[RMDB]
RNA sequence: GGGAACGACUCGAGUAGAGUCGAAAAGAAACGCUGUAUUAUCAGAACAAUGUCUUUAUGUCUGAAGCUAAAUGCUGGGUGGAAACCGAUCUGAAGAAAGGGCCACAUGAAUUCUGUUCACAGCAUAAACCGUUACCCUUCGGGGUAACGAAAAGAAACAACAACAACAAC
Reactivity to DMS in 0.01 (KOAc 150mM, MgCl2 10mM, bicine 150mM(pH8.5), 24C), signal-to-noise 9, nucleotides 027 to 129: g000a070a060a060c130g010c050u040g020u020a090u010u010a050u080c020a040g040a070a080c160a100a040u030g040u010c060u020u060u030a070u020g000u030c010u000g020a050a020g000c010u000a070a080a050u010g040c000u000g050g030g020u020g000g030a060a070a080c020c000g040a200u000c030u030g080a100a110g000a040a010a300g000g020g050c000c000a040c040a110u040g020a060a070u020u040c120u010g030u030u030c110a180c030a010g030c000a060u050a040a060a070c080
Reactivity to 2A3 in 0.01 (KOAc 150mM, MgCl2 10mM, bicine 150mM(pH8.5), 24C), signal-to-noise 9, nucleotides 027 to 129: g060a020a060a000c080g010c030u020g020u050a150u180u060a060u270c030a000g040a040a030c030a040a110u140g060u050c050u050u170u070a090u100g030u000c020u020g030a000a000g000c030u080a130a110a040u120g000c040u040g050g050g000u030g030g030a080a050a060c010c020g020a040u010c040u130g160a170a120g020a040a100a030g020g020g030c000c010a010c000a010u080g030a040a090u080u030c060u100g060u040u040c050a010c010a040g000c010a010u070a020a040a020c050